[RMDB]
RNA sequence: GGGAACGACUCGAGUAGAGUCGAAAAAUCCGCGAGGCCUGGGAAGCCGAAAUCAGCGAGCGCACGCCGCUGCGCCCCACCGACCUCACCGAGGGUGCCGUGGACGUGGCGUGGUUCCGGCGGAUGCCGGUCGAUCCAUAUUCGUAUGGAUCGACCGAAAAGAAACAACAACAACAAC
Reactivity to 2A3 in 0.01 (KOAc 150mM, MgCl2 10mM, bicine 150mM(pH8.5), 24C), signal-to-noise 7, nucleotides 027 to 126: a000u010c010c000g000c030g050a050g010g030c020c040u090g030g070g100a040a010g010c010c010g030a060a040a030u100c040a020g130c030g150a030g020c090g010c090a010c010g010c000c000g020c020u020g000c010g020c000c030c010c000a080c040c040g080a110c010c040u130c060a140c080c080g030a130g010g000g000u020g020c030c020g030u040g020g050a140c030g020u050g050g020c000g000u010g000g010u030u000c010c000g010g000c020g020g010a030u060g060c040
Reactivity to DMS in 0.01 (KOAc 150mM, MgCl2 10mM, bicine 150mM(pH8.5), 24C), signal-to-noise 7, nucleotides 027 to 126: a080u010c010c010g020c060g010a140g000g020c020c030u010g010g000g010a210a230g000c010c010g000a040a060a080u000c060a090g010c090g010a140g010c050g010c020a030c010g010c020c010g010c020u010g010c020g000c010c010c000c040a080c120c030g000a110c080c070u010c130a060c170c090g000a140g000g000g010u000g010c020c140g010u000g000g010a100c040g020u000g010g000c000g020u000g000g010u000u000c010c010g010g000c000g000g010a080u000g010c100
Chemical mapping of a 177-nucleotide RNA with 2A3 and DMS. DMS adducts were read by reverse transcription with MarathonRT. As a SHAPE reagent, 2A3 marks flexible, mostly unpaired nucleotides at the ribose 2'-OH. For 2A3, 18,172 sequencing reads were counted. It was measured as part of the RMDB library OK2TST. The RNA was probed in 150 mM KOAc, 10 mM MgCl2 and 150 mM bicine (pH 8.5) at 24 C.